[RMDB]
RNA sequence: GGGAACGACUCGAGUAGAGUCGAAAAAAUGAUGCCUAUUCACGAUUUUUGGGGUUGUUUAACAAGUAUAAGUACUUCUCUGGUGCUAUGGAAACAGCCGCUUAUCGUGAAGCUGCAGCAUGUCAUCGACUAGUGAAGAGUUCGCUCUUCACUAGUCAAAAGAAACAACAACAACAAC
Reactivity to DMS in 0.01 (KOAc 150mM, MgCl2 10mM, bicine 150mM(pH8.5), 24C), signal-to-noise 3, nucleotides 027 to 126: a090a010u000g000a010u000g010c010c090u010a200u000u000c010a000c000g000a020u000u000u000u000u010g000g010g020g030u000u000g000u000u000u000a070a090c040a070a090g010u000a050u000a090a040g020u000a060c110u010u000c180u020c180u010g000g030u000g010c010u010a080u000g000g000a050a020a010c010a010g010c000c010g000c010u000u010a020u000c000g010u000g010a010a020g010c260u000g000c020a040g000c000a010u010g000u000c110a090u010c160
Reactivity to 2A3 in 0.01 (KOAc 150mM, MgCl2 10mM, bicine 150mM(pH8.5), 24C), signal-to-noise 2, nucleotides 027 to 126: a000a010u040g000a000u030g000c020c030u010a070u000u010c000a000c010g000a010u010u020u000u110u240g090g020g030g000u010u010g010u020u020u030a100a030c030a080a020g060u060a100u030a150a030g020u010a040c030u130u110c090u030c080u220g050g000u000g020c000u000a040u140g000g010a020a000a020c000a000g000c030c030g160c090u020u010a010u030c000g000u000g000a000a000g000c040u030g010c030a030g000c000a000u070g050u100c050a070u110c050